RNA sequence: GGGAACGACUCGAGUAGAGUCGAAAACUGGCGGUUUCCAGCCUCGAAGAACUGGCGAACGGCACCUUCCUGCCAGCCAUCGGUGAAAUCGACGAGCUUGAUCCGAAGGGCGUGAAGCGCGUAGUGAGUAGGAGAUAAGUUUCGACUUAUCUCCUACAAAAGAAACAACAACAACAAC
Reactivity to 2A3 in 0.01 (KOAc 150mM, MgCl2 10mM, bicine 150mM(pH8.5), 24C), signal-to-noise 6, nucleotides 027 to 126: c020u020g070g000c010g040g010u020u060u030c020c020a020g010c030c010u030c040g140a160a110g040a110a050c040u060g010g010c040g030a090a070c060g090g000c010a040c010c040u080u090c010c020u040g010c020c000a020g000c000c010a050u040c030g050g000u060g020a070a060a030u070c050g070a130c040g010a040g040c030u040u040g020a020u020c010c000g020a060a070g050g000g000c020g010u050g070a060a030g040c040g000c030g060u050a040g060u020g160a050
Reactivity to DMS in 0.01 (KOAc 150mM, MgCl2 10mM, bicine 150mM(pH8.5), 24C), signal-to-noise 9, nucleotides 027 to 126: c060u000g000g020c030g010g010u010u000u000c020c060a170g010c030c020u010c070g010a140a110g010a100a100c060u000g010g010c050g010a090a140c130g000g010c040a050c080c080u000u010c080c070u010g010c040c030a100g010c080c040a070u000c040g000g010u000g000a080a090a070u000c030g010a090c120g010a170g000c100u000u000g010a100u000c020c010g000a110a110g000g000g010c060g000u000g010a070a050g000c030g000c030g020u000a050g010u010g010a210
Source: RMDB library OK2TRN, as collected in RNAgym. The record gives the reactivity of an RNA of 177 nucleotides to 2A3 and DMS. The RNA was probed in 150 mM KOAc, 10 mM MgCl2 and 150 mM bicine (pH 8.5) at 24 C. 2A3 adducts were read by reverse transcription with SuperScript II with manganese. As a SHAPE reagent, 2A3 marks flexible, mostly unpaired nucleotides at the ribose 2'-OH.